RNA sequence: GGGAACGACUCGAGUAGAGUCGAAAAAUGAGGUAACCUAUUACGUGGGUUCAUGUGGUGAAGAUUACACUCACUCGUGGUCUGUUAUUAAGUCCCUAAUACUGACUGAUUCGAUAAUAUCAGAUCAUGUGUCAUACCGUUUCGACGGUAUGACACAAAAAGAAACAACAACAACAAC
Reactivity to DMS in 0.01 (KOAc 150mM, MgCl2 10mM, bicine 150mM(pH8.5), 24C), signal-to-noise 2, nucleotides 027 to 126: a130u000g010a020g020g000u010a010a020c030c020u000a060u000u000a040c050g030u010g000g020g030u020u030c020a000u000g020u010g010g000u000g000a090a050g010a060u000u000a040c060a150c000u000c020a030c090u000c130g030u000g000g000u000c000u000g000u000u000a040u000u010a030a090g000u000c010c070c040u000a060a070u020a140c180u000g010a070c010u000g000a110u000u010c150g000a170u010a050a020u010a170u020c000a040g000a010u010c000a060
Reactivity to 2A3 in 0.01 (KOAc 150mM, MgCl2 10mM, bicine 150mM(pH8.5), 24C), signal-to-noise 1, nucleotides 027 to 126: a010u110g070a050g050g000u050a040a060c000c030u020a040u190u110a040c080g030u040g060g070g000u160u230c020a020u090g040u100g070g020u020g040a070a020g000a110u010u010a020c090a000c050u020c000a020c000u010c020g020u030g010g000u000c030u020g070u020u020a070u060u000a070a000g000u050c070c020c000u010a080a000u090a090c080u030g000a000c000u010g030a090u130u080c110g080a050u040a230a030u050a070u050c000a010g050a070u010c000a020